[RMDB]
The record gives the reactivity of an RNA of 177 nucleotides to DMS and 2A3. DMS adducts were read by reverse transcription with MarathonRT. For 2A3 the reverse transcriptase was SuperScript II with manganese.
RNA sequence: GGGAACGACUCGAGUAGAGUCGAAAAUGGAUGAGGUUGAAAGUACAAAUGUGUCAAUCGUUAGUGAAAUGAAAGCAUUGCCACACUACCACCGAAAUGCCACUACCUUCAAUCAAGCGGCUCGUGAAAAGCUGAUCAUGUUCGCAUGAUCAGCUUUAAAAGAAACAACAACAACAAC
Reactivity to DMS in 0.01 (KOAc 150mM, MgCl2 10mM, bicine 150mM(pH8.5), 24C), signal-to-noise 1, nucleotides 027 to 126: u000g000g020a060u000g030a130g010g000u000u000g000a090a040a070g010u000a100c120a020a090a110u010g000u010g010u000c010a040a060u000c050g000u000u020a120g010u010g020a100a110a200u010g010a030a110a070g020c110a020u010u000g010c090c010a000c060a050c130u000a070c010c030a110c000c030g010a070a020a120u010g010c010c020a030c080u010a120c050c030u010u000c060a020a100u020c090a020a100g000c070g010g000c060u000c010g000u010g010a070
Reactivity to 2A3 in 0.01 (KOAc 150mM, MgCl2 10mM, bicine 150mM(pH8.5), 24C), signal-to-noise 1, nucleotides 027 to 126: u060g000g010a020u010g010a000g010g070u020u100g090a180a080a060g060u030a110c040a240a170a090u120g020u010g010u060c000a010a040u040c070g090u060u040a150g040u070g280a100a060a090u200g080a150a000a000g030c010a000u000u060g000c010c000a030c000a020c050u020a010c000c000a010c000c030g020a000a000a080u220g030c000c000a020c010u050a050c000c000u000u150c120a100a120u030c010a000a040g000c020g070g030c040u010c080g080u080g090a000